[RMDB]
RNA sequence: GGGAACGACUCGAGUAGAGUCGAAAAGAACGGUCAUACGAGGCUGCGUAGACCGGAAAGAGCAGCCGAGAAAGUGGGAAAGCUACGGCGUGGCCUCGCUCGUAGCGAAAGAAGGCCGACCACGAAAGGAUAUGAGAUUCUUCGGAAUCUCAUAUCCAAAAGAAACAACAACAACAAC
Reactivity to 2A3 in 0.01 (KOAc 150mM, MgCl2 10mM, bicine 150mM(pH8.5), 24C), signal-to-noise 4, nucleotides 027 to 126: g110a100a030c040g000g010u030c050a060u080a220c060g030a060g020g010c010u020g010c020g040u100a060g120a160c110c060g020g050a040a020a000g010a000g000c000a000g000c010c060g040a020g010a030a070a010g010u030g010g040g000a110a090a040g000c000u000a000c010g020g000c020g020u110g060g100c030c050u040c030g000c000u100c020g000u010a000g000c000g000a020a000a000g060a050a050g020g000c000c010g010a010c000c000a010c020g050a050a060a040
Reactivity to DMS in 0.01 (KOAc 150mM, MgCl2 10mM, bicine 150mM(pH8.5), 24C), signal-to-noise 4, nucleotides 027 to 126: g040a150a160c020g000g030u000c000a200u030a070c030g010a150g000g000c000u000g030c000g020u020a120g020a130c110c030g050g030a060a140a080g000a140g000c040a030g000c000c000g000a140g020a040a100a080g000u000g000g010g000a100a080a150g000c000u000a000c000g000g000c010g000u000g000g000c130c080u000c010g010c000u030c020g030u000a010g000c010g020a020a060a060g020a220a080g000g010c000c000g000a220c010c030a020c010g000a080a090a090